[RMDB]
RNA sequence: GGGAACGACUCGAGUAGAGUCGAAAAGAUAUGGAGUCGCAAUGAAGAGCGAGGAUCUAGAGGAACUACUUAGGAUCGGAAACGAUCCUAAGCCUCUAGGGAGCUUCAAAGUGCGACUCCUAAGUCACUACCUCUAUAAGUUCGCUUAUAGAGGUAGAAAAGAAACAACAACAACAAC
Reactivity to 2A3 in 0.01 (KOAc 150mM, MgCl2 10mM, bicine 150mM(pH8.5), 24C), signal-to-noise 3, nucleotides 027 to 126: g030a000u060a030u190g000g000a000g000u000c030g000c040a020a090u190g090a190a290g050a020g110c060g120a300g060g010a000u000c000u000a000g000a020g000g010a060a080c100u210a020c000u300u000a000g010g000a000u000c010g000g000a130a050a000c000g010a000u000c020c000u000a000a000g010c010c000u010c000u010a000g000g000g010a010g010c000u110u150c090a210a070a030g070u020g020c000g000a000c000u000c000c000u000a000a000g000u010c000a010
Reactivity to DMS in 0.01 (KOAc 150mM, MgCl2 10mM, bicine 150mM(pH8.5), 24C), signal-to-noise 4, nucleotides 027 to 126: g010a040u010a300u010g000g000a010g030u000c010g010c010a020a050u010g020a300a230g010a010g020c000g020a050g030g000a030u020c000u000a010g000a010g010g000a090a030c060u010a300c000u000u000a000g010g000a010u000c010g000g010a150a090a180c010g010a000u010c000c000u000a000a000g000c000c000u000c000u000a000g000g000g000a040g020c000u000u000c040a030a260a130g000u000g000c000g010a010c010u000c000c000u000a000a060g000u010c020a250
Chemical mapping of a 177-nucleotide RNA with 2A3 and DMS. The 2A3 profile rests on 8,246 reads. The reactions ran in a buffer of 150 mM KOAc, 10 mM MgCl2 and 150 mM bicine (pH 8.5), at 24 C. It was measured as part of the RMDB library TTRINS. The DMS profile rests on 4,498 reads.